This 207-nucleotide RNA was probed chemically with DMS and 2A3. The reactions ran in a buffer of 150 mM KOAc, 10 mM MgCl2 and 150 mM bicine (pH 8.5), at 24 C. The DMS profile rests on 1,163 reads. Values cover nucleotides 27 to 156.
RNA sequence: GGGAACGACUCGAGUAGAGUCGAAAAACCAAGUCUGAGGGCCGAUGAGGGUUGGCUCAAAGUAGGGUUUUGACUUGAAAACUCAAGCUGUGACCCCAAAACGAUGGAGGUAAAUGAGAAUCCUCCUAAAACUAUGGACACUUCGGUGUCCAUAGAACCCCUAAAGUUACUUCGGUAACUUUAGGGGAAAAGAAACAACAACAACAAC
Reactivity to DMS in 0.01 (KOAc 150mM, MgCl2 10mM, bicine 150mM(pH8.5), 24C), signal-to-noise 1, nucleotides 027 to 156: a070c010c010a070a160g000u040c050u000g000a300g060g010g020c060c000g020a110u000g010a180g010g000g050u000u000g000g050c010u020c060a120a120a010g040u000a250g010g000g000u000u030u020u020g010a040c010u000u040g000a050a130a050a110c060u000c020a050a040g020c000u010g040u000g000a270c010c050c010c040a010a070a160a070c100g010a110u000g000g020a020g080g050u000a010a120a080u000g000a070g010a300a140u000c010c010u000c010c000u000a020a070a050a220c010u000a000u000g000g020a040c000a000c000u000u020c290g110g000u020g000u010c000c000a000u000a000g000a020a020
Reactivity to 2A3 in 0.01 (KOAc 150mM, MgCl2 10mM, bicine 150mM(pH8.5), 24C), signal-to-noise 4, nucleotides 027 to 156: a000c010c000a020a010g130u020c030u040g010a000g000g010g000c020c040g050a050u090g160a190g080g220g010u050u050g020g000c010u000c000a010a020a010g060u070a060g040g000g000u010u020u030u030g020a040c000u000u010g050a110a060a170a150c020u000c010a010a000g000c020u060g050u100g190a230c000c010c010c010a010a160a060a020c090g070a060u160g000g000a010g020g000u060a100a150a170u200g020a090g070a120a050u040c000c000u020c000c000u040a030a020a000a000c010u000a000u000g000g000a000c000a000c000u020u020c140g040g000u000g000u000c000c000a000u000a000g000a000a010